[RMDB]
RNA sequence: GGGAACGACUCGAGUAGAGUCGAAAAGUCCUACGCAACGAGACCCCGUGAACCUUGUCAGGUCCGGAAGGAAGCAGCAAUAAGCGGGUUCUCUCGUGUGCCGUAGGAGUGCCUGAACUGAGCUAACAUUAUAAGCAAACUUCGGUUUGCUUAUAAUAAAAGAAACAACAACAACAAC
Reactivity to DMS in 0.01 (KOAc 150mM, MgCl2 10mM, bicine 150mM(pH8.5), 24C), signal-to-noise 9, nucleotides 027 to 126: g000u000c000c000u000a010c020g000c010a100a010c010g000a010g000a030c230c010c000c000g030u000g000a140a150c300c260u010u000g000u010c010a300g000g000u000c010c010g000g070a140a130g000g010a020a010g010c010a240g010c010a000a000u010a140a300g000c000g000g000g000u000u030c270u000c000u000c010g010u000g010u020g020c100c040g030u000a000g010g010a040g000u010g020c000c000u010g010a080a110c130u010g010a110g000c050u010a080a130c150
Reactivity to 2A3 in 0.01 (KOAc 150mM, MgCl2 10mM, bicine 150mM(pH8.5), 24C), signal-to-noise 7, nucleotides 027 to 126: g050u000c000c000u000a000c000g000c000a010a000c000g020a000g110a160c020c000c000c000g040u050g030a050a080c050c090u020u010g060u110c010a010g020g020u000c000c000g090g090a050a090g020g010a010a010g000c010a000g000c000a000a020u050a080a010g000c000g000g000g000u110u070c030u000c000u000c020g010u110g220u070g030c100c030g000u000a000g000g010a010g020u110g070c000c000u060g060a150a110c060u110g050a040g100c040u060a050a030c020